[RMDB]
RNA sequence: GGGAACGACUCGAGUAGAGUCGAAAACCAUAACAGUUCGCUGUUAUGGACUGUCGGAAUGCGGAAUAAUUUAUCGUCCGCUUACGAUUAAUACCGACUAUAAAGCGUAACACUUCGGUGUUACGAACUUCCAGUGUUCAUUCGUGAACACUGGAAGAAAAGAAACAACAACAACAAC
Reactivity to DMS in 0.01 (KOAc 150mM, MgCl2 10mM, bicine 150mM(pH8.5), 24C), signal-to-noise 3, nucleotides 027 to 126: c010c010a010u010a000a010c000a000g010u000u000c230g040c010u010g000u010u010a000u000g010g000a090c140u000g000u000c010g000g000a120a050u000g020c000g000g000a000a050u040a100a130u000u030u000a080u010c250g000u000c000c010g000c010u000u000a050c090g000a060u000u010a070a090u020a210c010c000g000a070c130u010a070u010a090a040a110g000c010g000u010a000a010c000a010c000u000u010c280g050g000u000g000u000u000a000c000g000a020a060
Reactivity to 2A3 in 0.01 (KOAc 150mM, MgCl2 10mM, bicine 150mM(pH8.5), 24C), signal-to-noise 4, nucleotides 027 to 126: c000c000a000u000a000a010c000a000g030u080u090c100g040c130u000g000u000u000a000u010g000g020a050c080u060g010u000c000g000g030a100a050u130g000c000g000g110a030a050u180a090a120u070u210u230a250u170c110g040u000c010c000g010c000u010u040a010c020g000a010u030u090a040a020u050a090c010c020g060a020c030u070a060u080a300a120a010g080c000g020u000a000a010c000a000c010u030u090c240g110g000u000g000u000u000a000c000g000a000a020